[RMDB]
Structure probing data (DMS and 2A3) for a 177-nucleotide construct. The reactions ran in a buffer of 150 mM KOAc, 10 mM MgCl2 and 150 mM bicine (pH 8.5), at 24 C. Values cover nucleotides 27 to 126.

RNA sequence: GGGAACGACUCGAGUAGAGUCGAAAAAUUCAUUAGGUAAUGCUUUCGCUGGUGCAGGAUUUAAUACUGUCGUCACACCAUGUGCCUUGGCAAUUUCAAAUGCAGAUAUAAUAGCCGGGAUGGGUACGAUUUUUAUCCGUUUCGACGGAUAAAAAUCAAAAGAAACAACAACAACAAC
Reactivity to DMS in 0.01 (KOAc 150mM, MgCl2 10mM, bicine 150mM(pH8.5), 24C), signal-to-noise 2, nucleotides 027 to 126: a060u010u050c040a070u020u020a030g000g000u000a040a030u030g010c000u010u010u000c020g000c060u010g000g030u030g000c080a050g010g000a060u030u010u010a070a040u030a180c050u020g000u020c060g000u000c040a120c010a080c020c050a070u040g010u000g000c040c000u000u000g020g020c110a110a030u010u000u010c140a080a110a170u030g010c110a060g000a210u010a080u020a050a030u030a080g010c040c010g010g000g000a090u020g000g000g000u000a080c130
Reactivity to 2A3 in 0.01 (KOAc 150mM, MgCl2 10mM, bicine 150mM(pH8.5), 24C), signal-to-noise 3, nucleotides 027 to 126: a000u110u130c030a020u080u150a020g090g000u180a120a080u140g020c030u000u090u040c030g010c020u100g030g020u060g000c010a010g000g130a060u200u160u080a150a140u200a080c030u090g010u140c000g050u030c020a010c010a020c130c000a090u050g030u060g120c030c000u110u180g050g010c060a040a160u070u100u030c040a140a100a030u200g050c000a000g090a060u050a000u000a120a170u080a060g010c000c000g130g020g000a040u050g090g000g060u040a030c080
For DMS, 2,728 sequencing reads were counted.
2A3 adducts were read by reverse transcription with SuperScript II with manganese.